[RMDB]
RNA sequence: GGGAACGACUCGAGUAGAGUCGAAAAUCUGCUGGAGCACAAUUGCGCAAGUAUAUGGAUCGAUAUGCAAAACUUGGAGCAAUUGCUUUUACUAACGCACUUACCGGUGUCGAUUAUACGUACGCCGCAAGCGAUAUGCUUUCGAGCAUAUCGCUUGAAAAGAAACAACAACAACAAC
Reactivity to DMS in 0.01 (KOAc 150mM, MgCl2 10mM, bicine 150mM(pH8.5), 24C), signal-to-noise 4, nucleotides 027 to 126: u020c080u020g000c030u000g010g020a060g050c150a100c130a020a010u000u010g000c000g030c050a060a000g000u000a070u020a090u010g000g000a110u000c300g010a070u030a070u050g010c030a060a080a090a070c000u000u000g000g000a270g020c010a030a010u000u010g020c070u010u010u020u020a060c120u020a090a070c150g010c020a090c130u000u050a070c260c030g000g040u000g020u000c010g020a180u010u040a060u030a040c080g040u020a010c010g010c000c000g030
Reactivity to 2A3 in 0.01 (KOAc 150mM, MgCl2 10mM, bicine 150mM(pH8.5), 24C), signal-to-noise 8, nucleotides 027 to 126: u030c030u030g010c040u070g090g020a030g010c060a020c050a080a060u000u010g000c040g000c010a010a010g030u030a110u040a050u200g140g030a050u110c130g090a090u140a100u300g100c050a040a070a040a010c010u030u020g060g010a190g010c000a000a010u010u000g010c010u040u020u040u090a070c080u080a150a030c070g040c090a050c060u080u170a070c070c000g020g000u010g010u010c000g020a040u070u130a090u180a140c030g060u020a010c010g000c030c010g030
Source information:
Conditions: 150 mM KOAc, 10 mM MgCl2 and 150 mM bicine (pH 8.5), 24 C. This 177-nucleotide RNA was probed chemically with DMS and 2A3. DMS adducts were read by reverse transcription with MarathonRT. For 2A3, 6,590 sequencing reads were counted. DMS (dimethyl sulfate) methylates the pairing face of unpaired adenines and cytosines.